[RMDB]
RNA sequence: GGGAACGACUCGAGUAGAGUCGAAAAUGAAGGUGAAAAUCCUGUAGAUGAUAUGGACUACCAGUGCAUUUGUGAUACGGUUUCUAAGAGUCGAGUUGUUUGGGAAUGCAGCUCAAAGUGGGUGGUAUACUAGACCUUGGUUCGCCAAGGUCUAGUAAAAAGAAACAACAACAACAAC
Reactivity to DMS in 0.01 (KOAc 150mM, MgCl2 10mM, bicine 150mM(pH8.5), 24C), signal-to-noise 4, nucleotides 027 to 126: u030g010a150a030g000g010u010g000a060a040a150a090u000c000c000u000g010u000a100g010a080u000g000a130u020a070u000g010g000a050c060u000a070c080c030a080g000u020g010c050a050u020u010u020g010u000g000a100u010a120c130g010g000u000u000u010c030u000a050a100g010a090g030u010c030g000a080g000u000u000g020u000u020u000g020g010g000a080a070u020g030c040a020g020c010u010c050a020a030a070g000u010g000g000g030u000g010g000u000a130
Reactivity to 2A3 in 0.01 (KOAc 150mM, MgCl2 10mM, bicine 150mM(pH8.5), 24C), signal-to-noise 3, nucleotides 027 to 126: u180g010a050a030g050g000u070g020a010a010a000a060u070c010c020u040g040u090a070g020a120u100g010a020u100a090u270g070g000a000c040u050a050c040c040a020g010u030g170c030a070u020u050u070g050u020g010a050u060a100c030g020g040u000u110u060c060u070a060a030g030a040g120u120c030g000a010g020u090u010g030u030u050u160g020g000g000a020a020u020g020c000a000g000c000u030c060a040a080a020g060u150g040g030g000u060g000g020u030a020
Chemical mapping of a 177-nucleotide RNA with DMS and 2A3.
Conditions: 150 mM KOAc, 10 mM MgCl2 and 150 mM bicine (pH 8.5), 24 C.
DMS adducts were read by reverse transcription with MarathonRT.